[RMDB]
RNA sequence: GGGAACGACUCGAGUAGAGUCGAAAACUCGAAAGAGACCUGCAUAUCUUAGGCAGAUGACCAAGUCUCGUCUGAAAAGCGAAAGCCCUAAGAUAUGCAGCUGUGACGACUUGUCGCAGAAAAUAAAAGUAUUUACCCAGUUCGCUGGGUAAAUACUAAAAGAAACAACAACAACAAC
Reactivity to DMS in 0.01 (KOAc 150mM, MgCl2 10mM, bicine 150mM(pH8.5), 24C), signal-to-noise 3, nucleotides 027 to 126: c010u000c000g020a090a110a170g000a020g000a120c190c000u010g030c000a000u000a010u000c000u000u000a000g000g000c000a010g010a000u000g010a000c170c050a070a090g000u020c110u000c000g030u000c000u000g000a080a020a160a120g000c020g000a150a100a120g010c010c000c000u000a000a020g000a020u000a000u000g000c000a000g010c010u010g000u000g010a020c050g010a100c160u030u020g030u020c000g000c000a000g010a070a050a080a030u070a060a090a120
Reactivity to 2A3 in 0.01 (KOAc 150mM, MgCl2 10mM, bicine 150mM(pH8.5), 24C), signal-to-noise 6, nucleotides 027 to 126: c010u000c000g020a040a040a010g070a010g010a060c000c010u010g010c000a000u000a000u010c000u000u010a000g010g000c000a000g000a020u000g000a010c030c070a070a040g100u040c020u000c040g030u000c020u020g080a160a130a080a010g020c030g070a110a020a010g000c020c000c000u000a010a000g000a000u000a000u000g000c000a000g010c000u010g010u010g010a000c030g100a170c080u110u280g000u000c010g000c010a000g110a020a080a000a010u300a010a060a020